[RMDB]
RNA sequence: GGGAACGACUCGAGUAGAGUCGAAAACGAGCGAAGCGCCAGCGCGAAGCUCAGGAUGCGCUGACGCUGACGAACAUGCUGCGCACCCCUACACCGGGCCAGACGUCGAACGCGCUGCAGAACGAUCGCACGUGGAUUCGUUCGCGAGUCCACGUGCAAAAGAAACAACAACAACAAC
Reactivity to DMS in 0.01 (KOAc 150mM, MgCl2 10mM, bicine 150mM(pH8.5), 24C), signal-to-noise 4, nucleotides 027 to 126: c100g020a090g020c050g030a200a030g000c020g040c020c010a010g000c000g000c000g010a110a160g000c090u000c110a090g000g020a130u040g000c020g000c000u010g000a030c000g000c010u020g010a070c160g020a060a060c100a170u030g000c010u000g020c030g000c100a150c040c000c010c030u000a050c170a070c090c180g000g000g040c040c040a060g010a070c050g010u000c050g020a110a080c170g010c030g010c000u010g010c020a040g010a110a150c100g000a130u030c130
Reactivity to 2A3 in 0.01 (KOAc 150mM, MgCl2 10mM, bicine 150mM(pH8.5), 24C), signal-to-noise 6, nucleotides 027 to 126: c030g010a020g060c060g030a050a010g020c000g000c010c010a010g000c010g000c030g050a090a030g040c030u030c030a000g080g060a070u190g000c000g000c020u010g010a010c000g000c020u030g070a020c010g020a020a040c050a070u090g020c010u030g000c010g020c020a100c000c010c000c010u020a030c020a030c090c020g000g010g020c010c010a060g030a120c060g060u080c060g050a070a030c060g010c010g000c030u040g000c010a020g030a130a020c040g050a090u120c070

Structure probing data (DMS and 2A3) for a 177-nucleotide construct. As a SHAPE reagent, 2A3 marks flexible, mostly unpaired nucleotides at the ribose 2'-OH. Conditions: 150 mM KOAc, 10 mM MgCl2 and 150 mM bicine (pH 8.5), 24 C. Reactivities are given for positions 27 through 126.